[RMDB]
RNA sequence: GGGAACGACUCGAGUAGAGUCGAAAAUUCAUUGCUCGUCACACAGGCGCGAGCUUCACGAAGUACUGGCAGUUUUCGAGGAAGCCGCUGCCCGAGCGCCUGCUGUACCCCGUCGGAUAUUGGCACCGCUCCACCUAGCUUUCGAGCUAGGUGGAGCAAAAGAAACAACAACAACAAC
Reactivity to 2A3 in 0.01 (KOAc 150mM, MgCl2 10mM, bicine 150mM(pH8.5), 24C), signal-to-noise 1, nucleotides 027 to 126: u080u030c040a040u040u170g000c000u000c020g080u060c070a070c000a000c000a040g000g040c020g020c000g000a070g000c000u050u010c010a030c040g050a000a020g170u030a010c010u090g260g000c040a030g000u010u010u010u010c140g050a240g020g020a000a000g000c000c010g030c030u120g020c000c000c000g010a000g000c000g050c000c000u030g020c020u010g010u110a160c000c000c020c020g070u000c000g010g020a010u000a040u050u080g000g020c060a060c110c040
Background
Chemical mapping of a 177-nucleotide RNA with 2A3. The 2A3 profile rests on 680 reads. As a SHAPE reagent, 2A3 marks flexible, mostly unpaired nucleotides at the ribose 2'-OH. The reactions ran in a buffer of 150 mM KOAc, 10 mM MgCl2 and 150 mM bicine (pH 8.5), at 24 C.